Structure probing data (2A3 and DMS) for a 177-nucleotide construct. 2A3 adducts were read by reverse transcription with SuperScript II with manganese.

[RMDB]
RNA sequence: GGGAACGACUCGAGUAGAGUCGAAAACUGGGUAGAGUGGCACCUGGUUGGUGGCGCCUGUCUCAUAUCAGUGAGGGACAAAACAACUCCUUGUUUAUCCCAGCUUGGCUUUUGCUCUGUGCCCAUGCUGAUUAUGCCUAUUCGUAGGCAUAAUCAGAAAAGAAACAACAACAACAAC
Reactivity to 2A3 in 0.01 (KOAc 150mM, MgCl2 10mM, bicine 150mM(pH8.5), 24C), signal-to-noise 9, nucleotides 027 to 126: c010u010g010g010g030u060a040g030a090g090u050g050g070c010a010c020c010u070g190g030u130u170g020g020u030g020g040c020g020c010c010u020g050u020c000u000c010a150u140a130u180c090a040g110u060g150a120g010g010g010a010c020a030a060a010a000c020a020a060c050u120c060c060u080u050g020u050u060u050a050u060c000c000c000a000g010c020u030u050g020g000c000u010u030u140u120g000c010u000c030u060g030u040g020c010c000c000a040u120g040
Reactivity to DMS in 0.01 (KOAc 150mM, MgCl2 10mM, bicine 150mM(pH8.5), 24C), signal-to-noise 5, nucleotides 027 to 126: c030u000g010g020g010u000a060g000a100g020u010g000g000c030a070c040c010u000g010g010u020u010g020g020u020g000g000c050g010c010c010u000g000u000c010u010c020a100u020a130u020c150a050g010u010g010a120g000g000g000a040c020a050a040a030a020c070a040a080c240u030c190c130u000u000g000u000u000u000a170u010c010c010c010a160g010c060u000u000g010g010c050u000u000u010u010g030c030u000c030u010g000u010g000c010c010c000a100u020g010